[RMDB]
RNA sequence: GGGAACGACUCGAGUAGAGUCGAAAAACGAGUCGUACGCGACUCGAAUGGUAUUGUCCGCGUAAAAGAACAAGACGUCACCGGACGCGACCGGGCUAAAAAGCGAAACGUCAUCUACGGAUGACGAAAAACGGACCUGGGUUCGCCCAGGUCCGAACUUCCUUCCUUGGUUCGCCAAGGAAGGAAGAAAAGAAACAACAACAACAAC
Reactivity to 2A3 in 0.01 (KOAc 150mM, MgCl2 10mM, bicine 150mM(pH8.5), 24C), signal-to-noise 1, nucleotides 027 to 156: a000c010g000a000g000u000c010g000u020a010c190g010c000g060a000c000u000c000g000a020a040u090g040g030u100a070u070u190g020u010c050c000g040c000g110u090a070a000a080a060g060a090a110c020a110a060g080a050c010g050u060c020a000c030c010g020g000a000c000g000c000g000a020c000c000g040g000g070c050u080a050a050a020a020a000g020c020g000a110a000a000c000g010u000c000a000u000c000u020a050c120g070g000a000u000g000a000c010g070a090a000a000a000a000c010g010g000a000c000c000u010g020g000g040u050u080c180g040c010c000c010a000g030g000u010c000c000g000a000a000